[RMDB]
RNA sequence: GGGAACGACUCGAGUAGAGUCGAAAAGACCAGCCUGGACAAUGUGGCGAGACCCCAUCUCUACAAAAAAAUACAUAAAUUAGCCAGGCAUGGUGGCGUGUGCUUAUAGUCCUAGGUACUCUAGAGGCUAAGGUGGGAGGAUCCCUUGAGCCCGGGAGCAUUAUGCACGUUUCGACGUGCAUAAUGCAAAAGAAACAACAACAACAAC
Reactivity to 2A3 in 0.01 (KOAc 150mM, MgCl2 10mM, bicine 150mM(pH8.5), 24C), signal-to-noise 1, nucleotides 027 to 156: g050a000c010c000a000g050c030c000u050g040g000a080c050a160a170u100g030u040g030g010c040g030a020g020a060c010c010c020c030a110u040c030u040c040u090a090c110a000a300a000a020a000a000a000u130a040c090a040u210a030a160a090u100u120a170g040c010c000a000g020g010c000a070u000g010g040u020g020g000c050g080u030g020u020g010c010u130u140a100u040a210g020u000c000c030u050a030g110g020u090a150c020u050c000u160a030g010a110g020g000c030u020a020a000g050g010u020g020g040g000a040g000g030a010u000c000c040c000u030u040g040a010g000c000c020c040g000g000g000a000
Source: RMDB library OK3TST, as collected in RNAgym. The record gives the reactivity of an RNA of 207 nucleotides to 2A3. The 2A3 profile rests on 701 reads. The reactions ran in a buffer of 150 mM KOAc, 10 mM MgCl2 and 150 mM bicine (pH 8.5), at 24 C.